[RMDB]
RNA sequence: GGGAACGACUCGAGUAGAGUCGAAAAAAAGGUAAUGUCAUCAGUUAAGGCAGGAACCGGCCACACUUCUUUAGUGAUUCUUCAGUUACUUUAGGCCAUCUGGAUGUAUACGUGCAGGUCACAGGGGAUAUAAUGGCUUAGCUUGGGCUCAGAGGCCGUUCGUGGAGUAAUUCGUUACUCCACGAACAAAAGAAACAACAACAACAAC
Reactivity to 2A3 in 0.01 (KOAc 150mM, MgCl2 10mM, bicine 150mM(pH8.5), 24C), signal-to-noise 1, nucleotides 027 to 156: a000a000a000g080g010u080a060a050u050g020u050c020a070u020c030a010g040u060u070a050a010g000g010c020a000g010g000a030a010c050c060g030g070c020c000a020c000a000c040u140u240c010u070u230u210a030g020u050g100a030u080u070c010u060u050c110a050g020u020u060a060c000u050u030u090a010g020g060c010c020a040u000c040u060g040g000a040u020g090u040a060u040a180c030g020u030g000c010a010g010g010u060c030a010c040a080g080g010g010g030a000u060a000u000a060a160u120g000g000c000u020u020a010g000c000u040u070g030g040g020c000u000c010a060g020a080g110g000c000c030
This 207-nucleotide RNA was probed chemically with 2A3. Source: RMDB library OK3TST, as collected in RNAgym. The RNA was probed in 150 mM KOAc, 10 mM MgCl2 and 150 mM bicine (pH 8.5) at 24 C.